RNA sequence: GGGAACGACUCGAGUAGAGUCGAAAACGCUGCACACCAGUCGCAGACGCUAAAAAUAACGCUGCAUCGCGACAGAUGUGUCAACGCGCUAGCUAGCGCAAGCUAUAGCGUUACGUACGAGAAGCGAAAAUAUAAUAUUUUUCGAAAUAUUAUAUUUAAAAGAAACAACAACAACAAC
Reactivity to 2A3 in 0.01 (KOAc 150mM, MgCl2 10mM, bicine 150mM(pH8.5), 24C), signal-to-noise 6, nucleotides 027 to 126: c030g010c030u040g010c000a000c000a000c020c040a030g010u010c000g020c050a070g010a050c040g000c020u100a080a050a050a110a130u210a120a070c110g040c070u100g010c040a060u050c040g000c010g010a000c020a030g070a070u030g020u020g020u070c040a020a040c050g000c010g000c020u010a030g060c040u050a000g020c020g000c060a030a010g000c000u070a050u070a070g010c000g020u040u060a030c060g030u070a040c050g040a040g040a220a030g050c020g040a080
Reactivity to DMS in 0.01 (KOAc 150mM, MgCl2 10mM, bicine 150mM(pH8.5), 24C), signal-to-noise 5, nucleotides 027 to 126: c020g030c020u030g010c020a020c020a030c050c050a070g000u000c020g020c010a100g040a050c050g010c030u010a010a080a090a130a140u030a100a140c140g020c100u010g010c050a100u010c060g020c000g010a020c010a090g010a040u010g010u010g020u000c080a060a100c140g000c000g010c030u000a040g010c170u040a090g000c020g010c110a080a040g010c060u000a040u010a020g000c000g010u000u020a090c120g000u010a090c090g000a100g020a120a090g000c020g010a120
The record gives the reactivity of an RNA of 177 nucleotides to 2A3 and DMS.
The RNA was probed in 150 mM KOAc, 10 mM MgCl2 and 150 mM bicine (pH 8.5) at 24 C.
2A3 is a SHAPE reagent: it acylates the 2'-hydroxyl of flexible nucleotides of all four kinds.
For DMS, 8,157 sequencing reads were counted.
For 2A3, 4,380 sequencing reads were counted.